[RMDB]
RNA sequence: GGGAACGACUCGAGUAGAGUCGAAAACCGAGCCAGUUGGCUGCCCCAUGGAUUUGGGGGUGCUGGCCGGUUCAACGCUCGCUAAGGUGUGGGUUGCGGGGAGAAAAAAAAAAGAAAAAUACAGAGGGAAUCCCCCGCGGCUUAAGGUACGUACGCCCUUGAAUUACAUCUUCGGAUGUAAUUCAAGAAAAGAAACAACAACAACAAC
Reactivity to 2A3 in 0.01 (KOAc 150mM, MgCl2 10mM, bicine 150mM(pH8.5), 24C), signal-to-noise 2, nucleotides 027 to 156: c010c000g010a080g000c000c010a020g020u070u160g160g020c130u110g060c010c000c000c000a050u080g130g090a160u260u090u080g030g000g000g010g000u060g010c010u010g000g010c040c000g000g000u030u030c010a070a010c050g000c030u050c010g010c020u060a080a070g050g030u050g040u050g000g010g000u020u000g000c020g000g000g050g010a140g140a080a020a000a010a000a000a000a000a020a010g140a080a140a030a010a000u150a120c080a030g120a080g060g020g020a020a090u020c010c020c000c010c000g000c020g020g000c000u060u020a060a020g010g020u040a030c020g030u000a000c050g060c000c000
Conditions: 150 mM KOAc, 10 mM MgCl2 and 150 mM bicine (pH 8.5), 24 C.
The record gives the reactivity of an RNA of 207 nucleotides to 2A3.
Source: RMDB library ARCHII, as collected in RNAgym.